Chemical mapping of a 177-nucleotide RNA with 2A3 and DMS. Reactivities are rounded to 0.1 and cut off at 0 and 3. It was measured as part of the RMDB library OK2TST. The reactions ran in a buffer of 150 mM KOAc, 10 mM MgCl2 and 150 mM bicine (pH 8.5), at 24 C. DMS (dimethyl sulfate) methylates the pairing face of unpaired adenines and cytosines.
[RMDB]
RNA sequence: GGGAACGACUCGAGUAGAGUCGAAAAGCGGUCCGCACUUCGCCGCGCUGCGUCAGGGUUUCGAGGCCGUCGCUGAAGGCGUAGGCCCCGGUGGGAAAGGCCGAAUCGGCGAGUUGCAGCAGGCGCAGAUGAGAAAACAUUUCGAUGUUUUCUCAUCAAAAGAAACAACAACAACAAC
Reactivity to 2A3 in 0.01 (KOAc 150mM, MgCl2 10mM, bicine 150mM(pH8.5), 24C), signal-to-noise 6, nucleotides 027 to 126: g020c030g010g080u060c030c030g020c040a050c050u120u100c020g000c010c000g040c020g000c050u040g000c020g050u050c040a100g090g070g030u040u110u180c060g040a080g030g000c010c000g020u030c010g000c020u120g120a170a040g100g000c030g020u070a110g030g000c000c000c000c010g050g020u130g040g040g020a080a100a060g050g000c010c010g040a070a120u120c020g010g000c030g010a040g030u080u140g010c000a020g010c010a010g010g020c020g010c030a040
Reactivity to DMS in 0.01 (KOAc 150mM, MgCl2 10mM, bicine 150mM(pH8.5), 24C), signal-to-noise 8, nucleotides 027 to 126: g010c060g020g010u000c040c060g020c110a110c090u000u000c040g020c010c010g010c200g020c050u000g010c060g000u010c050a140g010g010g010u010u000u000c080g020a090g000g010c010c010g010u000c010g020c010u000g010a140a140g010g010c020g020u010a220g020g000c000c000c010c040g000g010u010g010g010g000a080a100a140g000g010c010c010g000a090a100u010c060g000g010c020g010a050g010u000u000g020c020a040g020c040a160g010g010c020g010c220a090